[RMDB]
An RNA of 177 nucleotides, treated with DMS and 2A3 and read out base by base. For DMS the reverse transcriptase was MarathonRT. Reactivities are given for positions 27 through 126.

RNA sequence: GGGAACGACUCGAGUAGAGUCGAAAAGAGCAUGUUAAACACUAUCUGGCACACUUGGGUAGGACAGUUUGUCGGCGUGUCCCUCUGGGUCCCCAUCUUUAGCUCUCCGAUGUCAGCCGCGCAGGGCGAUCCACCAUACUUUCGAGUAUGGUGGAUCAAAAGAAACAACAACAACAAC
Reactivity to DMS in 0.01 (KOAc 150mM, MgCl2 10mM, bicine 150mM(pH8.5), 24C), signal-to-noise 5, nucleotides 027 to 126: g020a090g020c070a040u000g000u000u000a090a100a070c080a090c070u000a060u000c040u000g020g020c030a080c080a060c080u010u000g010g020g010u000a060g010g010a060c070a060g020u000u000u010g020u000c040g000g020c110g030u000g000u000c030c020c030u000c060u010g000g000g010u000c010c010c020c080a080u020c050u010u010u010a150g000c030u000c010u000c030c020g010a080u010g010u000c070a100g000c050c030g010c070g020c080a060g010g010g020c140
Reactivity to 2A3 in 0.01 (KOAc 150mM, MgCl2 10mM, bicine 150mM(pH8.5), 24C), signal-to-noise 4, nucleotides 027 to 126: g040a010g020c060a050u100g010u160u180a080a140a010c020a020c050u070a070u080c030u060g040g000c040a030c010a020c110u070u120g050g040g010u080a050g020g090a040c030a050g040u060u110u070g070u090c040g010g020c040g010u040g040u040c020c000c000u010c020u040g070g000g020u030c010c010c020c000a060u000c030u020u110u060a020g000c010u030c000u010c030c010g030a020u070g050u070c030a010g000c020c010g020c020g000c040a020g030g020g020c030